[RMDB]
RNA sequence: GGGAACGACUCGAGUAGAGUCGAAAACUCAUACUUACAGCCCACUGAAGCCAAGAAAUUACCAACUGGAGCUUGCUUUACCUGCUCAGAAUGGAAAAAACACAAUAAUAUGUGCUCCUACUGGUUGUAAUACAUGAGCCUUCGGGCUCAUGUAUUAAAAAGAAACAACAACAACAAC
Reactivity to DMS in 0.01 (KOAc 150mM, MgCl2 10mM, bicine 150mM(pH8.5), 24C), signal-to-noise 2, nucleotides 027 to 126: c020u000c020a110u060a030c160u000u070a060c030a050g020c020c010c020a090c110u000g000a170a060g000c030c050a020a110g000a070a070a010u020u040a080c050c000a030a130c180u000g000g000a060g000c000u010u000g000c060u020u020u000a090c070c020u000g000c020u010c030a030g000a080a040u030g000g020a000a030a020a110a060a090c030a060c020a060a000u000a100a140u000a090u000g010u030g000c030u000c030c000u000a170c110u020g000g030u020u030g000
Reactivity to 2A3 in 0.01 (KOAc 150mM, MgCl2 10mM, bicine 150mM(pH8.5), 24C), signal-to-noise 4, nucleotides 027 to 126: c010u010c020a040u110a160c020u050u020a030c030a030g010c000c000c000a070c020u020g040a050a000g000c020c020a050a040g120a110a120a050u190u100a150c010c040a060a050c070u110g050g000a020g010c030u020u000g010c000u050u090u070a080c000c000u060g000c020u010c060a050g120a110a170u150g000g000a090a040a020a020a040a000c060a010c020a040a070u220a120a090u090a110u270g030u030g050c010u020c010c000u060a130c060u020g030g000u000u030g020
Conditions: 150 mM KOAc, 10 mM MgCl2 and 150 mM bicine (pH 8.5), 24 C. Chemical mapping of a 177-nucleotide RNA with DMS and 2A3. The 2A3 profile rests on 1,769 reads. 2A3 adducts were read by reverse transcription with SuperScript II with manganese.